[RMDB]
RNA sequence: GGGAACGACUCGAGUAGAGUCGAAAAGAAAAAGGAGGACAUGUCCGCCUGAUUGUGUCCGACCCUGUAGAUAGUUCGCUCUGGAAAUUGUGCGGGACAACCCACGCGCGCAGCGAGCCGAAAAAAACCGGGUAAGUAAGUUCGCUUACUUACCCGGAAAAGAAACAACAACAACAAC
Reactivity to DMS in 0.01 (KOAc 150mM, MgCl2 10mM, bicine 150mM(pH8.5), 24C), signal-to-noise 1, nucleotides 027 to 126: g000a030a080a060a100a050g000g000a220g000g030a030c040a050u000g020u000c000c140g020c150c080u040g000a120u000u030g040u020g000u020c020c000g060a070c160c000c000u000g000u000a070g000a190u000a100g030u020u010c000g010c030u020c050u000g020g000a110a080a070u000u000g050u000g000c010g000g030g040a140c110a060a200c070c000c000a190c060g000c020g020c030g000c040a050g010c030g000a020g010c010c030g000a000a030a080a060a020a170a110